Description:
This 177-nucleotide RNA was probed chemically with DMS and 2A3. Conditions: 150 mM KOAc, 10 mM MgCl2 and 150 mM bicine (pH 8.5), 24 C. For 2A3, 55,419 sequencing reads were counted.
RNA sequence: GGGAACGACUCGAGUAGAGUCGAAAAGAUAUGGACAAAUGGCUUUUGACGCGAGAAGGGUCGGAAACGACCCGGAUCGCGAUAAGCCAUUGUCCUAAGUCAAAAGCGCACUGUUCGCAGUGCGCAACCUACAUAUGAUGUUCGCAUCAUAUGUAGGAAAAGAAACAACAACAACAAC
Reactivity to DMS in 0.01 (KOAc 150mM, MgCl2 10mM, bicine 150mM(pH8.5), 24C), signal-to-noise 9, nucleotides 027 to 126: g000a040u000a300u010g000g000a010c000a010a030a030u000g010g010c000u000u000u000u010g020a180c070g010c000g010a010g000a300a150g000g000g010u000c000g000g000a060a070a170c000g010a010c000c000c000g000g000a250u000c000g020c000g010a020u000a010a020g000c000c000a010u000u000g010u000c000c000u000a020a080g010u000c040a060a070a070a130g000c000g000c000a010c000u000g000u000u020c190g020c000a010g010u000g010c000g000c000a010a010
Reactivity to 2A3 in 0.01 (KOAc 150mM, MgCl2 10mM, bicine 150mM(pH8.5), 24C), signal-to-noise 8, nucleotides 027 to 126: g020a020u080a040u120g000g000a010c020a020a280a130u010g020g000c030u080u110u120u300g250a160c090g000c000g010a010g000a030a030g020g000g000u000c000g010g020a010a060a040c000g000a030c000c000c000g000g000a000u000c000g000c000g010a000u000a000a000g000c000c000a000u000u000g000u000c000c000u000a090a010g030u010c030a020a030a110a120g000c000g000c000a000c000u020g070u130u160c300g000c170a000g000u000g000c000g000c000a000a000